The record gives the reactivity of an RNA of 177 nucleotides to DMS and 2A3. Source: RMDB library RFMREP, as collected in RNAgym. DMS adducts were read by reverse transcription with MarathonRT.

RNA sequence: GGGAACGACUCGAGUAGAGUCGAAAAUGAACUGUAAAAAGUGAUAGUCUUGUACACGUAAGAAUAUUAAUCGUAGUAGUAUCCUGAGUACCACGGAGCACGUGAAAUUCUGUGGGAAUCUGUCAGAGACUAAAUGAUCGUUCGCGAUCAUUUAGUCAAAAGAAACAACAACAACAAC
Reactivity to DMS in 0.01 (KOAc 150mM, MgCl2 10mM, bicine 150mM(pH8.5), 24C), signal-to-noise 3, nucleotides 027 to 126: u030g000a130a070c040u010g020u010a050a080a180a170a040g000u000g000a060u000a080g000u010c020u000u000g010u000a080c120a070c160g010u000a080a050g020a040a060u000a030u000u000a030a080u030c060g000u000a080g010u000a040g030u000a100u000c030c000u000g010a080g000u000a220c010c000a010c020g010g000a040g010c180a080c100g020u000g000a090a090a110u030u000c000u000g010u000g010g010g010a060a150u000c030u000g000u000c060a120g030a300
Reactivity to 2A3 in 0.01 (KOAc 150mM, MgCl2 10mM, bicine 150mM(pH8.5), 24C), signal-to-noise 2, nucleotides 027 to 126: u060g020a000a030c010u020g010u110a020a010a120a180a040g020u040g040a020u030a030g050u020c020u040u070g060u090a050c020a000c130g060u030a010a020g030a090a020u070a050u220u140a090a080u080c030g020u040a060g030u000a020g010u000a060u020c010c020u010g030a020g020u040a030c000c010a000c010g010g000a000g030c060a000c220g140u110g040a030a020a050u030u000c000u020g010u000g000g030g010a010a030u000c020u010g100u080c020a030g020a010